[RMDB]
RNA sequence: GGGAACGACUCGAGUAGAGUCGAAAACGAUCAGUACGUUCGCGUACUGAUCGAAGCUACUGGAGACAGUAGCAAGUCUAAGACCUUGUUAUGUGGAAACAAGGAAAAAUGGAGGAAGGACGGACCUCCAUACUUAGACAACCACAAACCGUCCAAAAUCAAAAUUACCCUUCGGGGUAAUUUUGAUAAAAGAAACAACAACAACAAC
Reactivity to 2A3 in 0.01 (KOAc 150mM, MgCl2 10mM, bicine 150mM(pH8.5), 24C), signal-to-noise 1, nucleotides 027 to 156: c030g000a000u000c000a000g010u000a000c020g010u010u080c300g010c000g060u010a000c010u000g000a000u000c000g000a000a000g000c000u000a010c000u010g000g010a060g010a030c000a010g000u010a000g010c000a000a000g000u000c000u000a000a010g000a180c000c000u020u020g000u050u050a230u130g170u160g200g040a120a000a000c000a000a000g000g000a050a060a070a040a040u020g010g000a020g000g030a130a200g000g000a000c020g020g020a120c000c010u030c000c000a000u010a000c000u000u000a000g000a020c040a040a060c070c030a040c070a090a000a000c000c000g000u000c000c000a040a120a010
Chemical mapping of a 207-nucleotide RNA with 2A3. For 2A3, 894 sequencing reads were counted. Conditions: 150 mM KOAc, 10 mM MgCl2 and 150 mM bicine (pH 8.5), 24 C.